An RNA of 207 nucleotides, treated with DMS and 2A3 and read out base by base. It was measured as part of the RMDB library M2RFPK. DMS adducts were read by reverse transcription with MarathonRT. The reactions ran in a buffer of 150 mM KOAc, 10 mM MgCl2 and 150 mM bicine (pH 8.5), at 24 C.
RNA sequence: GGGAACGACUCGAGUAGAGUCGAAAAACACCAAAACUGAAAACGGAAGGCAAUCCUUCCACGACGAUACUUACUUUCCUUUGAUCGUCGUUACUACUGGCAUAGCCACAAAGGAGAACAAAAAUGAGCGCGGACACUGACUUCGGUCAGUGUCCAACAAGUAGGUAAGGUUCGCCUUACCUACUUGAAAAGAAACAACAACAACAAC
Reactivity to DMS in 0.01 (KOAc 150mM, MgCl2 10mM, bicine 150mM(pH8.5), 24C), signal-to-noise 4, nucleotides 027 to 156: a100c070a180c030c030a080a050a080a280c130u010g010a090a060a100a120c050g020g020a050a020g060g000c090a120a130u000c010c000u000u000c000c010a100c000g000a030c010g000a030u000a040c060u000u000a050c120u000u010u000c020c020u000u000u020g000a030u000c000g030u000c000g020u000u010a070c050u010a050c060u010g010g020c040a150u000a110g020c020c020a050c060a020a060a050g020g020a090g000a120a260c090a020a050a090a070a140u010g000a110g010c080g010c120g020g020a040c000a000c000u000g000a040c000u000u000c300g050g030u000c000a000g010u000g000u000c000c000a000a040
Reactivity to 2A3 in 0.01 (KOAc 150mM, MgCl2 10mM, bicine 150mM(pH8.5), 24C), signal-to-noise 9, nucleotides 027 to 156: a000c090a100c030c040a060a080a040a080c140u230g080a100a070a040a040c070g010g000a010a000g030g000c150a060a170u260c000c000u000u000c000c000a000c000g000a000c000g000a000u080a160c020u100u040a040c020u070u140u060c010c000u040u020u040g020a000u000c000g000u000c000g000u020u050a030c030u030a030c020u010g010g000c060a250u110a160g010c010c000a020c030a030a040a010g040g020a040g030a090a040c080a060a070a070a050a060u170g040a060g130c150g010c090g050g000a000c000a000c000u000g000a000c000u040u060c130g010g000u000c000a000g000u000g000u000c000c000a000a000